[RMDB]
RNA sequence: GGGAACGACUCGAGUAGAGUCGAAAAUCGCCGGGGGUCCUCCCUCUUCGUCCUUCUUCUUUCUCAACAUUCCGACGAUGUUUCCCAGCCAGGGGUUUUCAUCCUCAAGUUUCUUGAUCUUCUUGUUACAGUGACAAGUUCGCUUGUCACAAAAGAAACAACAACAACAAC
Reactivity to DMS in 0.01 (KOAc 150mM, MgCl2 10mM, bicine 150mM(pH8.5), 24C), signal-to-noise 9, nucleotides 027 to 129: u000c090g010c040c020g010g000g000g000g000u000c020c020u000c020c040c030u020c000u000u050c090g030u020c040c040u030u030c020u010u000c040u010u040u020c050u020c020a110a150c120a070u010u010c020c030g030a100c110g000a070u010g000u000u000u000c000c020c040a120g030c080c060a060g000g000g000g000u010u010u010u010c070a120u000c020c010u040c100a100a150g030u030u020u020c030u050u030g020a040u040c040u030u020c050u000u000g030u040u020a090c150a140
Reactivity to 2A3 in 0.01 (KOAc 150mM, MgCl2 10mM, bicine 150mM(pH8.5), 24C), signal-to-noise 9, nucleotides 027 to 129: u050c040g010c020c000g000g000g000g000g020u010c000c000u010c010c020c010u010c000u020u040c030g070u010c020c000u030u040c000u030u000c000u010u090u010c040u020c020a050a130c030a150u100u080c040c020g030a060c030g020a060u060g030u000u040u010c000c010c010a010g020c020c030a030g000g010g000g010u030u050u070u090c040a060u040c000c010u060c020a020a060g040u020u040u020c000u040u040g060a070u040c010u080u010c010u080u080g060u100u080a090c070a100